[RMDB]
RNA sequence: GGGAACGACUCGAGUAGAGUCGAAAAGAAAGAAAGAAAUUAGCUCGCCAGCUAGCGAGGUCUGUCCCCACACGACAGAUAAUCGGGUGCAACUCCCGCCCCUUUUCCGAGGGUCAUCGGAACCAAAAAAACUCAGGCAACUUCGGUUGCCUGAGAACAUCAGAAGCGUGUUCGCACGCUUCUGAUGAAAAGAAACAACAACAACAAC
Reactivity to 2A3 in 0.01 (KOAc 150mM, MgCl2 10mM, bicine 150mM(pH8.5), 24C), signal-to-noise 1, nucleotides 027 to 156: g080a000a080a000g110a050a170a000g050a030a140a060u160u120a100g010c010u010c010g050c020c050a050g120c140u050a040g000c000g000a010g010g000u000c010u020g040u010c040c030c030c010a030c030a010c090g000a000c000a000g040a040u060a070a090u140c000g010g000g000u000g010c000a010a010c030u000c020c000c010g000c000c010c000c000u000u290u040u000c000c010g010a000g000g010g040u080c030a020u000c000g000g000a010a000c030c020a030a020a050a030a030a070a100c000u000c010a010g020g000c000a000a010c000u040u100c140g020g010u000u000g020c000c000u010g000a000g000a000a000